[RMDB]
RNA sequence: GGGAACGACUCGAGUAGAGUCGAAAAAGCUAAGGUUGCAUGUCGGAGUGGGCAGGCUCCGUUAAAAAGCCCAUCUUAUACAAACGCCGAUACUGACGUUUCGUACGCACUGGCAGCUUAAGUCUGCCACGUCUCUAGUCUCUUCGCCUGCGGGUUUACCUUCUAUUAAGUUCGCUUAAUAGAAGGUAAAAGAAACAACAACAACAAC
Reactivity to 2A3 in 0.01 (KOAc 150mM, MgCl2 10mM, bicine 150mM(pH8.5), 24C), signal-to-noise 5, nucleotides 027 to 156: a000g080c070u100a080a020g050g030u090u060g030c070a040u090g090u080c010g010g010a030g020u070g000g020g010c020a010g060g020c010u000c010c010g070u040u050a030a080a030a030a010g010c030c000c000a040u060c040u070u220a170u030a120c060a040a080a000c040g030c020c010g070a070u070a170c070u090g050a020c020g020u000u030u100c090g000u100a060c070g020c060a020c060u020g000g000c000a010g000c020u170u230a150a050g070u050c000u000g000c010c010a000c040g030u000c010u010c010u050a050g010u000c010u000c000u070u040c020g010c020c010u030g030c050g020g060g000u010u000u000
Reactivity to DMS in 0.01 (KOAc 150mM, MgCl2 10mM, bicine 150mM(pH8.5), 24C), signal-to-noise 1, nucleotides 027 to 156: a120g050c030u000a080a130g000g010u010u010g030c050a100u000g020u000c060g000g000a070g070u010g000g010g010c040a090g020g000c000u000c030c040g000u010u040a020a070a090a080a060g020c020c010c000a110u000c070u000u000a120u000a060c030a030a030a050c020g020c020c000g030a300u000a100c130u000g010a030c000g030u000u000u000c120g000u010a020c070g000c100a070c060u010g020g030c000a010g000c040u000u000a120a100g030u010c000u000g000c000c000a020c040g010u000c020u000c010u000a100g020u000c030u000c030u000u010c000g000c090c020u000g010c050g010g010g020u010u010u000